Structure probing data (2A3) for a 207-nucleotide construct. Reactivities are given for positions 27 through 156. The reactions ran in a buffer of 150 mM KOAc, 10 mM MgCl2 and 150 mM bicine (pH 8.5), at 24 C.
RNA sequence: GGGAACGACUCGAGUAGAGUCGAAAAUUCCAAGUCGGGAGUUGAGGGUUCGGGCUCGAGCGAAGGCUUGUGGUUCGGGCAUUCUUAGAGCGGAGGAGACUGCGUGAGGCUGGUUUCACAGAGCAGCGUCCACCUCCCGCUUUCGACGGUGGAAGGAGUUAUUUGCAGGGUUCGCCCUGCAAAUAACAAAAGAAACAACAACAACAAC
Reactivity to 2A3 in 0.01 (KOAc 150mM, MgCl2 10mM, bicine 150mM(pH8.5), 24C), signal-to-noise 2, nucleotides 027 to 156: u030u000c000c000a000a000g010u000c000g000g000g010a050g030u100u170g070a020g030g100g000u000u000c010g010g030g010c000u010c030g000a000g000c030g060a120a030g300g000c000u030u020g050u200g020g010u050u020c010g010g000g000c030a020u230u000c010u060u140a090g000a030g060c180g000g000a000g010g000a020g020a020c060u170g020c070g060u070g000a080g090g070c070u030g030g090u060u190u300c140a120c000a040g070a020g080c010a000g000c000g010u060c010c020a160c030c000u000c000c000c000g000c000u000u000u000c000g010a000c020g090g010u030g030g020a000a020g040g030a150